[RMDB]
RNA sequence: GGGAACGACUCGAGUAGAGUCGAAAAAAUAUGCUCGACAGCCUGCCUGUCCGACAGAGCUUUUAGAUCUUCUGAUCUUUCCCUGCAGCAUAUCGCUUAUGCAUCAAGCGAUUGUCGGAUCACACAACGCAUGGUAUGAAUUCGUUCAUACCAUGCGAAAAGAAACAACAACAACAAC
Reactivity to DMS in 0.01 (KOAc 150mM, MgCl2 10mM, bicine 150mM(pH8.5), 24C), signal-to-noise 3, nucleotides 027 to 126: a070a080u000a010u000g010c040u000c040g040a160c070a030g000c050c120u000g040c090c050u000g000u000c030c020g030a010c030a050g010a110g000c200u000u000u000u000a010g000a010u010c010u000u000c300u010g000a040u000c000u000u000u000c000c010c000u000g000c140a060g000c040a050u010a030u010c020g010c010u000u000a060u010g040c240a100u010c120a050a030g000c010g010a030u000u000g020u000c010g010g000a100u010c110a040c140a080c150a040a090
Reactivity to 2A3 in 0.01 (KOAc 150mM, MgCl2 10mM, bicine 150mM(pH8.5), 24C), signal-to-noise 3, nucleotides 027 to 126: a000a020u210a070u100g010c020u020c010g040a010c040a040g000c000c020u120g060c010c020u040g040u000c010c010g000a000c010a020g050a030g040c000u040u050u040u030a030g000a010u040c030u290u060c170u300g010a000u000c000u000u020u010c010c000c010u010g040c020a040g000c020a020u010a010u160c000g000c020u060u050a060u190g150c070a100u150c100a070a000g000c000g010a020u000u030g020u000c010g000g010a050u060c050a030c010a000c020a150a090